[RMDB]
RNA sequence: GGGAACGACUCGAGUAGAGUCGAAAAGAUAUGGACUAGAGCGAUAAGCUGUCACUCGGAAACGAGUGCAGCUUUUGACGCUCAAUGUCCUAAGUCAAAUCCGAAAGUCGUUCGCGACUUUCGGAAACAAUUGUACACCGUUCGCGGUGUACAAUUGAAAAGAAACAACAACAACAAC
Reactivity to 2A3 in 0.01 (KOAc 150mM, MgCl2 10mM, bicine 150mM(pH8.5), 24C), signal-to-noise 3, nucleotides 027 to 126: g020a030u080a030u090g000g000a010c020u020a030g010a010g030c020g110a140u030a280a020g000c000u020g090u300c010a000c010u000c020g010g020a070a050a040c010g010a010g000u000g000c000a000g000c040u020u000u010u040g010a000c010g000c000u000c010a000a020u060g010u000c010c010u000a070a010g020u000c020a050a030a190u020c000c000g000a020a000a000g010u000c010g020u070u200c300g030c010g180a000c000u020u000u000c000g000g040a000a000a000
Reactivity to DMS in 0.01 (KOAc 150mM, MgCl2 10mM, bicine 150mM(pH8.5), 24C), signal-to-noise 5, nucleotides 027 to 126: g010a040u000a300u010g000g030a010c000u010a300g000a000g020c010g010a120u010a030a020g000c000u010g000u000c030a000c000u010c010g010g000a090a070a130c010g010a010g020u000g000c000a000g010c000u000u000u000u000g000a140c040g000c000u000c000a110a070u010g000u000c000c000u000a020a110g000u000c030a070a120a140u010c000c000g000a010a000a000g000u000c000g020u000u010c210g010c010g010a010c000u000u000u000c000g000g000a000a030a080
Source: RMDB library TTRDEL, as collected in RNAgym. This 177-nucleotide RNA was probed chemically with 2A3 and DMS.